RNA sequence: GGGAACGACUCGAGUAGAGUCGAAAAUUAAAGAUCGAAAGAUCGCGAAACUCGCCGGCGCCGCUGUUGGCGGACCUUCAGCGACAGCGCCAGAACGAAUAAGGUCCGCAGUACGAAAGUACAAAAAGAUUAGCAUGUUGUUCGCAACAUGCUAAUCAAAAGAAACAACAACAACAAC
Reactivity to DMS in 0.01 (KOAc 150mM, MgCl2 10mM, bicine 150mM(pH8.5), 24C), signal-to-noise 1, nucleotides 027 to 126: u000u000a050a180a070g000a020u000c000g000a130a170a200g000a010u000c000g010c070g000a130a090a180c120u000c040g010c120c020g000g000c000g040c020c030g000c000u000g030u010u000g030g000c000g040g000a000c000c010u000u010c000a000g040c000g010a080c130a160g000c000g050c030c000a080g020a070a190c130g020a060a090u000a020a010g070g000u000c010c000g030c070a100g040u000a010c020g010a070a050a260g000u000a010c000a070a050a110a050a180
Reactivity to 2A3 in 0.01 (KOAc 150mM, MgCl2 10mM, bicine 150mM(pH8.5), 24C), signal-to-noise 1, nucleotides 027 to 126: u030u030a100a110a060g020a000u000c000g040a070a030a010g000a020u020c020g000c030g020a200a140a050c050u040c060g060c000c040g020g000c000g010c000c030g000c000u000g020u060u010g160g000c000g000g000a000c000c000u010u050c000a010g000c000g080a080c060a050g000c010g000c000c010a010g060a080a040c120g040a130a140u060a060a000g000g010u050c000c020g000c010a000g000u000a000c030g020a060a030a010g000u010a000c000a000a100a000a010a000
The record gives the reactivity of an RNA of 177 nucleotides to DMS and 2A3. The RNA was probed in 150 mM KOAc, 10 mM MgCl2 and 150 mM bicine (pH 8.5) at 24 C. It was measured as part of the RMDB library M2PK90.